[RMDB]
Background:
Structure probing data (DMS and 2A3) for a 207-nucleotide construct. Conditions: 150 mM KOAc, 10 mM MgCl2 and 150 mM bicine (pH 8.5), 24 C. For 2A3, 8,555 sequencing reads were counted. The data come from the RNA Mapping Database (RMDB), library M2RFOK.
RNA sequence: GGGAACGACUCGAGUAGAGUCGAAAACACGUUCGUGCUUGCGACUUACACGUAGGGCGAGGGGUGGGCGAAAGUUGCCAUGAGACCGUAACUUUCGUAGUCAUUGAUAAAGGGGCAGGUCUCGCUCAAAACCUCCCGUGGUUCGCCACGGGAGGAACAUCUACUACAUGUUCGCAUGUAGUAGAUGAAAAGAAACAACAACAACAAC
Reactivity to DMS in 0.01 (KOAc 150mM, MgCl2 10mM, bicine 150mM(pH8.5), 24C), signal-to-noise 1, nucleotides 027 to 156: c000a070c020g000u000u000c160g050u020g050c000u000u010g020c000g020a080c060u010u000a040c060a120c050g020u000a090g000g010g020c040g000a070g000g000g020g010u010g000g000g060c000g010a050a000a030g000u000u000g010c000c000a060u000g000a040g010a110c020c030g000u040a030a030c020u000u000u000c000g000u020a100g000u000c090a210u010u000g020a120u010a080a060a090g000g020g010g020c040a060g000g000u000c000u000c010g150c140u000c110a020a010a090a230c000c010u000c000c020c020g050u000g000g000u000u000c300g030c000c000a030c000g000g050g000a010g000g000a000a020
Reactivity to 2A3 in 0.01 (KOAc 150mM, MgCl2 10mM, bicine 150mM(pH8.5), 24C), signal-to-noise 9, nucleotides 027 to 156: c070a000c000g070u110u090c030g020u040g130c040u090u100g020c020g070a090c080u120u140a040c120a020c080g050u070a080g010g020g020c090g060a090g010g020g010g090u260g010g010g010c020g000a000a000a000g000u010u010g030c060c060a150u170g050a000g000a010c000c000g000u000a000a000c000u000u010u010c030g000u010a020g040u040c070a120u030u240g080a050u130a110a050a030g020g000g020g010c060a030g000g000u000c010u000c000g000c030u120c050a060a130a070a100c000c000u000c000c000c000g010u000g000g010u040u060c190g030c040c000a000c000g010g000g000a000g000g000a000a000